[RMDB]
RNA sequence: GGGAACGACUCGAGUAGAGUCGAAAAGGCAGAGGAAAACGCCUAUAGCCGGCGAGUGAAGACGAACCAUCGGCUGCCGUGUUCUUUUUCCUCUUGGAGGUUGGAGUCCCCUGGGCGCCCCCACACGCCAUCAUUAAGUUUUCGAACUUAAUGAUGGAAAAGAAACAACAACAACAAC
Reactivity to DMS in 0.01 (KOAc 150mM, MgCl2 10mM, bicine 150mM(pH8.5), 24C), signal-to-noise 9, nucleotides 027 to 126: g010g010c040a040g010a050g000g010a040a030a060a070c090g010c100c030u000a120u030a080g010c060c030g010g000c040g000a140g010u020g010a110a090g010a080c100g010a090a100c080c050a110u010c060g010g010c010u000g000c100c150g000u010g000u010u020c040u000u010u010u010u000c000c010u000c030u010u010g010g010a070g000g010u010u000g000g000a170g000u000c030c010c020c080u000g000g010g020c040g000c030c010c000c010c010a060c190a100c210g000
Reactivity to 2A3 in 0.01 (KOAc 150mM, MgCl2 10mM, bicine 150mM(pH8.5), 24C), signal-to-noise 9, nucleotides 027 to 126: g060g010c040a020g010a050g040g070a030a050a020a010c030g020c010c010u100a110u120a100g060c030c010g020g010c050g050a090g060u130g080a120a070g100a090c070g040a060a040c030c010a060u090c030g040g000c020u020g020c020c020g030u060g030u060u070c040u030u040u010u020u020c010c000u010c020u050u070g100g020a070g030g040u080u100g030g010a040g050u050c010c000c000c020u030g020g010g010c020g010c000c000c000c000c000a030c000a010c040g030